[RMDB]
RNA sequence: GGGAACGACUCGAGUAGAGUCGAAAAAAAGAUAUGGACGUGAGAUAGCUGCAGCCAGAGAGGUACGCUCGGAAACGAGCGUACUCCCCACCUCUGGAACUACUGCCGAAACACGUCCUAAGUCAAACAGAACAAUGCAGUUCGCUGCAUUGUUCUGAAAAGAAACAACAACAACAAC
Reactivity to DMS in 0.01 (KOAc 150mM, MgCl2 10mM, bicine 150mM(pH8.5), 24C), signal-to-noise 1, nucleotides 027 to 126: a010a100a140g020a020u000a030u000g000g010a000c000g030u000g040a010g000a190u010a090g060c300u000g010c010a010g000c020c000a020g010a040g060a190g030g000u000a000c000g030c000u000c000g030g010a000a010a040c000g040a030g000c060g030u010a000c040u010c110c020c000c060a300c140c000u000c000u000g000g000a030a000c010u000a300c000u000g010c000c010g020a260a120a070c030a010c000g000u010c000c000u000a000a090g000u000c030a200a090a140